An RNA of 177 nucleotides, treated with 2A3 and read out base by base. For 2A3 the reverse transcriptase was SuperScript II with manganese. The RNA was probed in 150 mM KOAc, 10 mM MgCl2 and 150 mM bicine (pH 8.5) at 24 C.
RNA sequence: GGGAACGACUCGAGUAGAGUCGAAAAUGUCGUGAAAGAUUCUCGAGGCAUUGUAAUCCCCGCUCGAGGAGCUUACAAUGUAUUGGCAUUUCCUCUAGGCUCACUUGCUUAUGAUCAUCCAGAUGCCGCGGAUCCAGUAUUUCGAUACUGGAUCCGCAAAAGAAACAACAACAACAAC
Reactivity to 2A3 in 0.01 (KOAc 150mM, MgCl2 10mM, bicine 150mM(pH8.5), 24C), signal-to-noise 1, nucleotides 027 to 126: u060g010u060c040g070u070g140a110a050a070g070a120u050u010c050u000c010g020a070g000g090c010a040u100u040g020u020a050a050u070c000c000c000c000g000c000u080c000g010a100g000g000a020g000c000u080u050a050c060a160a100u200g050u140a070u040u120g000g000c010a000u010u000u040c020c000u000c040u120a010g040g020c000u000c030a080c030u050u110g010c000u070u050a050u210g100a080u030c010a040u050c020c060a000g010a090u040g000c080c030